[RMDB]
RNA sequence: GGGAACGACUCGAGUAGAGUCGAAAACUACUUAUUUUUUAUGACUAAGAUUAAGCUGACAACCAUGCAAAACAUUGCAAACCUGUGUCGGCUGCAGAUUUAAUACCUCACCUAGCCCACACAAAUAAUUCAUGCUUCUGCAUCGAUGUCCAGAAGACCCAUCCUAUACGUUCGCGUAUAGGAUGGGAAAAGAAACAACAACAACAAC
Reactivity to 2A3 in 0.01 (KOAc 150mM, MgCl2 10mM, bicine 150mM(pH8.5), 24C), signal-to-noise 2, nucleotides 027 to 156: c010u100a020c030u190u010a210u220u250u050u040u040u040a260u170g000a040c040u030a070a120g010a100u280u020a030a000g060c010u000g000a000c000a030a010c010c030a040u040g020c000a000a010a080a110c110a140u100u150g010c090a030a060a150c030c100u030g010u070g010u150c010g010g040c030u000g000c000a000g030a050u020u130u300a110a050u110a120c060c050u060c040a050c000c010u010a010g000c010c020c010a050c010a000c030a030a090a150u110a030a030u200u070c030a030u100g000c000u030u030c070u090g020c000a040u050c130g040a030u070g020u030c050c010a010g020a120a020g090a070

The record gives the reactivity of an RNA of 207 nucleotides to 2A3.